[RMDB]
Source: RMDB library TTRDES, as collected in RNAgym. The record gives the reactivity of an RNA of 177 nucleotides to DMS. DMS adducts were read by reverse transcription with MarathonRT. Values are in units of 0.01, from 0 to 300, in steps of 10. The DMS profile rests on 1,169 reads.

RNA sequence: GGGAACGACUCGAGUAGAGUCGAAAAAAAAGAUAUGGAAGCAGGGAGCUAGGUGCACCGAUGAAACGCUUCGGAAACGAAGCGUGGAGGUGCACAACUAGCGAAGAACUGCUUCCUAAGUCAAAAAGAUUAACCAAGGGUUCGCCCUUGGUUAAUCAAAAGAAACAACAACAACAAC
Reactivity to DMS in 0.01 (KOAc 150mM, MgCl2 10mM, bicine 150mM(pH8.5), 24C), signal-to-noise 1, nucleotides 027 to 126: a020a030a040a110g020a050u010a300u020g020g000a010a010g000c010a000g020g010g010a160g000c000u000a000g000g010u000g000c000a030c000c000g050a060u010g000a130a130a030c000g000c000u000u000c000g010g000a190a120a140c020g000a010a000g020c010g000u010g020g000a050g010g030u000g000c020a000c000a030a040c010u000a020g000c020g020a060a080g020a090a120c000u000g000c000u000u000c000c000u010a020a080g010u030c030a130a080a150a100a120